[RMDB]
RNA sequence: GGGAACGACUCGAGUAGAGUCGAAAACUCUGCAUAUUCGUAUGCAGAGAAAUAACGGUCGGCUCAUGCAGCUAGUCGAACAUGGUGCUCGACCUUUUGGUAAAAACCGGAGGUUCGCCUCCGGUAACAAUUCCGUAGAAUUCGUUCUACGGAAUUGAAAAGAAACAACAACAACAAC
Reactivity to 2A3 in 0.01 (KOAc 150mM, MgCl2 10mM, bicine 150mM(pH8.5), 24C), signal-to-noise 3, nucleotides 027 to 126: c010u000c000u010g000c000a000u030a050u090u110c200g080u050a000u010g000c010a000g000a000g010a000a070a000u100a040a020c040g000g000u000c000g000g000c000u010c020a020u040g010c010a020g030c040u170a080g230u290c010g030a040a020c000a000u040g010g070u160g080c130u170c140g000a000c000c000u020u070u030u050g040g020u070a040a010a010a000a020c000c000g010g010a000g030g010u040u080c170g100c000c000u000c000c020g000g000u000a000a000
Reactivity to DMS in 0.01 (KOAc 150mM, MgCl2 10mM, bicine 150mM(pH8.5), 24C), signal-to-noise 7, nucleotides 027 to 126: c000u000c000u000g010c000a000u000a000u000u010c190g030u000a000u000g010c000a010g010a010g000a030a060a050u000a070a080c200g010g010u000c000g000g000c000u000c010a020u000g000c030a300g010c030u010a070g010u010c060g000a100a240c010a010u000g000g010u010g000c010u010c020g000a020c010c000u000u000u000u000g010g020u010a070a040a050a080a050c000c000g000g000a010g010g010u000u010c270g010c020c000u000c010c000g010g010u000a000a050